[RMDB]
RNA sequence: GGGAACGACUCGAGUAGAGUCGAAAAGUAUUUGGGGACGCUACAUUUAAAAUGCCGAAUUGUUCUUGACCCGAUUUAAGUGGUACCGUUGCAUGAUGUGUAAUAUUGUCAUUUUGGCUAGGAAAUGCGUACCCUUUACCUUCGGGUAAAGGGUACGAAAAGAAACAACAACAACAAC
Reactivity to DMS in 0.01 (KOAc 150mM, MgCl2 10mM, bicine 150mM(pH8.5), 24C), signal-to-noise 1, nucleotides 027 to 126: g000u010a070u010u000u000g010g000g000g000a060c060g000c070u000a050c040a080u000u000u010a030a080a180a090u010g020c020c010g010a020a030u000u000g000u000u000c040u000u010g020a110c020c000c000g000a090u010u010u000a070a090g010u010g010g030u000a060c070c030g020u010u010g010c070a100u000g000a070u000g020u010g010u010a120a140u000a080u000u000g000u000c010a040u000u000u000u020g010g020c090u000a200g010g000a040a050a040u000g010